Source: RMDB library OK3TST, as collected in RNAgym.
An RNA of 207 nucleotides, treated with DMS and 2A3 and read out base by base.
Conditions: 150 mM KOAc, 10 mM MgCl2 and 150 mM bicine (pH 8.5), 24 C.
For DMS the reverse transcriptase was MarathonRT.
RNA sequence: GGGAACGACUCGAGUAGAGUCGAAAAUCAGCUUUGGAGUAUACAACGUAUUCCUUGCUAAUAACAAGAAGGAUGUUUUUGCUUUAGUUGAUGCUGAAAGUAAAGAUGCUAAAAAAGUAGUAGAUAGUAAUGAGAAACCUCAUGAAGACGUGAGCGCCCAUUACCUGAGGUUCGCCUCAGGUAAUGGAAAAGAAACAACAACAACAAC
Reactivity to DMS in 0.01 (KOAc 150mM, MgCl2 10mM, bicine 150mM(pH8.5), 24C), signal-to-noise 2, nucleotides 027 to 156: u000c010a040g020c050u010u020u040g030g020a070g030u000a050u010a060c050a100a140c080g030u000a070u000u000c030c030u010u000g030c040u000a080a100u000a060a060c060a020a050g000a050a020g000g010a050u000g030u020u010u000u020u000g030c040u000u000u000a090g040u000u000g060a060u000g000c020u000g000a090a030a110g010u010a010a070a040g000a050u020g020c060u000a000a000a060a100a100a110g020u000a050g030u000a060g020a090u000a060g010u000a060a080u000g010a100g000a050a070a110c110c010u000c030a040u020g010a050a090g010a110c080g020u000g000a060g010c060g040c140
Reactivity to 2A3 in 0.01 (KOAc 150mM, MgCl2 10mM, bicine 150mM(pH8.5), 24C), signal-to-noise 4, nucleotides 027 to 156: u060c020a010g000c020u080u080u140g040g010a010g010u030a060u010a170c140a130a030c080g020u050a070u010u030c000c000u010u000g040c010u020a130a120u110a150a050c080a050a010g050a040a010g070g030a050u060g030u040u010u010u060u050g040c030u060u050u070a030g010u060u090g020a060u140g000c020u010g050a100a040a000g010u060a010a040a000g060a020u060g020c050u130a110a010a040a040a060a020g030u060a020g010u000a010g020a130u060a010g050u060a050a060u070g010a020g050a130a110a040c020c020u030c000a020u030g050a050a030g040a030c040g020u010g010a030g040c030g110c000